Source: RMDB library M2RFPK, as collected in RNAgym. The record gives the reactivity of an RNA of 207 nucleotides to 2A3 and DMS. For 2A3 the reverse transcriptase was SuperScript II with manganese.
RNA sequence: GGGAACGACUCGAGUAGAGUCGAAAAGGCUGCGUAUCACUCUAGGGUACGCGAUAGUGCGAUAUAAGAAGCACUGGUACAUGCCGGCAGGGACAGUUAAGAGAUGGCCGCAGUCUCGUGUCCCUGCAAAAGGAGUUCUCGUUCGCGAGAACUCCAAUCUAAAUAGAAAGUUCGCUUUCUAUUUAGAAAAAGAAACAACAACAACAAC
Reactivity to 2A3 in 0.01 (KOAc 150mM, MgCl2 10mM, bicine 150mM(pH8.5), 24C), signal-to-noise 6, nucleotides 027 to 156: g010g000c020u030g000c040g010u000a010u010c020a070c190u170c160u220a110g090g000g000u010a000c000g010c000g000a010u060a010g010u000g000c020g020a040u030a020u070a300a080g130a110a020g000c000a000c000u010g000g020u120a080c050a060u140g020c010c010g020g000c010a000g000g000g010a000c000a040g030u150u160a180a050g020a000g000a010u030g080g070c090c060g040c100a030g020u000c000u000c000g000u010g000u000c010c000c000u000g000c000a000a000a000a010g000g000a000g000u000u000c000u000c000g020u060u060c220g000c000g080a000g000a000a010c000u000c000c000a000a000
Reactivity to DMS in 0.01 (KOAc 150mM, MgCl2 10mM, bicine 150mM(pH8.5), 24C), signal-to-noise 4, nucleotides 027 to 156: g020g010c010u000g020c010g030u000a030u000c000a110c130u010c150u010a250g020g010g030u000a010c010g010c000g020a080u000a030g020u000g010c010g000a160u010a140u010a120a180g000a230a290g010c010a030c000u000g010g020u010a080c100a080u010g020c030c010g000g010c020a030g010g000g010a030c020a050g010u010u000a140a120g010a040g000a050u000g020g020c080c220g010c130a220g000u000c000u000c010g000u000g020u000c000c000c000u000g010c010a000a010a050a100g000g000a040g020u000u000c010u000c000g040u010u010c240g000c000g020a030g000a010a020c000u010c000c000a010a040